[RMDB]
RNA sequence: GGGAACGACUCGAGUAGAGUCGAAAAAAUAUUAUGUUUUAUAUUGACAAGCUCCUAGAUUUCUGAGGGGAAUCCACUGUAAAUGGGAUCAGGUCAUUCAUUUAUGCUGUGUGCAAAUAUAAUUUUAUAACUGAUGUUUUUUCGAAAACAUCAGUUAAAAAGAAACAACAACAACAAC
Reactivity to 2A3 in 0.01 (KOAc 150mM, MgCl2 10mM, bicine 150mM(pH8.5), 24C), signal-to-noise 1, nucleotides 027 to 126: a000a000u300a070u110u290a140u100g040u070u160u050u020a120u010a070u020u080g010a010c020a060a030g000c010u010c020c010u140a080g000a240u050u100u030c110u160g070a110g010g090g000g010a030a010u000c010c020a090c110u070g010u170a060a030a000u120g040g000g000a040u010c040a010g050g130u000c010a020u090u110c000a000u000u000u160a010u210g030c010u010g000u010g000u050g140c010a010a030a010u050a010u030a060a070u100u000u070u040a230
Notes
Chemical mapping of a 177-nucleotide RNA with 2A3.